[RMDB]
This 177-nucleotide RNA was probed chemically with DMS and 2A3. The RNA was probed in 150 mM KOAc, 10 mM MgCl2 and 150 mM bicine (pH 8.5) at 24 C. For 2A3, 1,198 sequencing reads were counted. For DMS, 2,078 sequencing reads were counted. The data come from the RNA Mapping Database (RMDB), library OK2TRN.
RNA sequence: GGGAACGACUCGAGUAGAGUCGAAAAAAUCAUCAGCUCGCUCAGUAUCUCUGUACCUAUUAAGGCUGACACUGGUGAUUAUGCCCAAAUGUAUCGAGGUAUUCUGGAAAAAUGGAUUGGCUGGCCAUACACUCUCUGAGUUCGCUCAGAGAGUGUAAAAAGAAACAACAACAACAAC
Reactivity to DMS in 0.01 (KOAc 150mM, MgCl2 10mM, bicine 150mM(pH8.5), 24C), signal-to-noise 2, nucleotides 027 to 126: a040a010u000c030a020u000c010a000g010c160u020c140g010c190u010c020a010g000u010a080u010c090u000c140u010g020u000a080c160c080u010a130u000u000a120a070g020g010c020u000g000a030c060a070c000u000g000g000u000g000a030u000u000a040u010g010c000c000c000a060a100a080u010g000u000a050u000c100g000a080g010g010u000a070u000u000c010u010g010g010a020a060a060a060a070u000g010g010a090u010u000g000g020c050u000g010g020c010c050a180
Reactivity to 2A3 in 0.01 (KOAc 150mM, MgCl2 10mM, bicine 150mM(pH8.5), 24C), signal-to-noise 2, nucleotides 027 to 126: a000a000u010c020a000u010c000a000g000c070u100c180g030c020u050c090a010g040u080a140u120c100u040c030u220g130u110a150c000c050u090a110u260u180a160a000g030g000c020u000g010a000c000a000c000u010g000g000u000g010a010u010u010a040u070g040c000c010c010a020a110a010u160g000u030a100u100c080g050a060g100g000u070a090u140u040c050u110g080g100a080a030a060a050a090u090g000g020a000u030u050g060g000c010u010g030g000c040c010a000